[RMDB]
RNA sequence: GGGAACGACUCGAGUAGAGUCGAAAAGUAAGCAAAGACGUAAUAACCGUCAUGGUAAGUAAAGUGAGCGCAGGCCGUAAGAAAUGCAAACGCGUUAUGAUUCAGAACACCUGGUGCGCUAUUAUAACCUAUUAUAUGGAUUCGUCCAUAUAAUAGGAAAAGAAACAACAACAACAAC
Reactivity to DMS in 0.01 (KOAc 150mM, MgCl2 10mM, bicine 150mM(pH8.5), 24C), signal-to-noise 9, nucleotides 027 to 126: g020u010a080a100g010c090a080a090a130g010a080c100g020u000a060a060u010a070a070c190c010g010u000c030a050u010g010g010u000a030a090g010u000a040a050a060g010u000g010a070g010c090g010c040a070g000g010c210c090g010u010a070a070g010a070a140a070u000g000c040a040a160a130c160g010c040g010u000u000a080u010g010a110u000u000c100a050g000a080a070c180a030c030c010u000g000g010u000g010c080g010c030u000a020u010u000a030u010a090a160
Reactivity to 2A3 in 0.01 (KOAc 150mM, MgCl2 10mM, bicine 150mM(pH8.5), 24C), signal-to-noise 7, nucleotides 027 to 126: g040u050a060a020g050c080a110a050a050g050a020c030g030u060a060a120u070a140a050c040c000g010u030c020a030u070g010g010u050a040a050g010u030a050a080a070g050u040g100a020g000c050g000c040a030g040g030c020c010g020u010a060a030g040a110a110a020u100g000c030a090a110a070c070g000c010g020u010u010a110u120g130a070u070u080c020a030g030a070a010c020a010c030c020u030g040g020u050g020c040g010c030u000a020u070u080a040u040a030a020
Chemical mapping of a 177-nucleotide RNA with DMS and 2A3. The DMS profile rests on 17,623 reads. Source: RMDB library OK2TRN, as collected in RNAgym. Conditions: 150 mM KOAc, 10 mM MgCl2 and 150 mM bicine (pH 8.5), 24 C. Reactivities are given for positions 27 through 126.